The record gives the reactivity of an RNA of 207 nucleotides to DMS and 2A3. For 2A3 the reverse transcriptase was SuperScript II with manganese. Values cover nucleotides 27 to 156. Reactivities are rounded to 0.1 and cut off at 0 and 3. The RNA was probed in 150 mM KOAc, 10 mM MgCl2 and 150 mM bicine (pH 8.5) at 24 C.
RNA sequence: GGGAACGACUCGAGUAGAGUCGAAAAAGGGUCUCCUUGGCAUCUGUGCUGUAUAAAAUCCAUAGACAGAGCAGCCAUUGGCUCUUGUUCAAACCACAAGAAAGUCUCCUGCCCACUCCUGGUGCAUUCUGGGAACAGAUUUGCUGUCUGCAAAGGCAGAUACGUGAGGUUUCGACCUCACGUAUCUAAAAGAAACAACAACAACAAC
Reactivity to DMS in 0.01 (KOAc 150mM, MgCl2 10mM, bicine 150mM(pH8.5), 24C), signal-to-noise 1, nucleotides 027 to 156: a070g010g010g050u010c010u000c110c020u020u000g050g130c010a110u000c050u020g030u000g040c020u010g000u010a150u010a180a060a150a140u010c120c090a140u020a140g040a030c000a060g040a020g000c040a080g030c010c000a120u010u000g010g000c020u000c000u000u000g000u000u030c010a100a080a160c170c060a100c040a040a100g010a140a080a070g010u000c010u000c050c020u000g040c000c010c050a120c080u000c040c000u000g000g060u000g010c090a080u000u000c050u000g050g020g040a090a160c120a110g000a150u000u000u000g030c060u000g020u010c010u000g020c010a020a140a160g020g000c150
Reactivity to 2A3 in 0.01 (KOAc 150mM, MgCl2 10mM, bicine 150mM(pH8.5), 24C), signal-to-noise 2, nucleotides 027 to 156: a000g050g010g000u020c050u050c050c040u010u050g030g000c000a030u000c010u040g030u090g130c030u040g060u130a130u120a140a060a040a080u100c080c040a060u070a060g020a030c000a000g010a020g080c080a010g010c000c010a050u020u060g050g000c030u010c000u000u030g020u030u040c030a110a050a090c010c020a010c050a030a040g060a100a100a000g040u010c070u050c030c010u040g000c000c000c010a040c040u050c020c030u030g050g000u040g010c030a040u080u030c000u020g020g010g000a070a050c000a010g050a030u060u090u110g040c020u050g030u120c040u010g010c000a080a000a010g060g000c020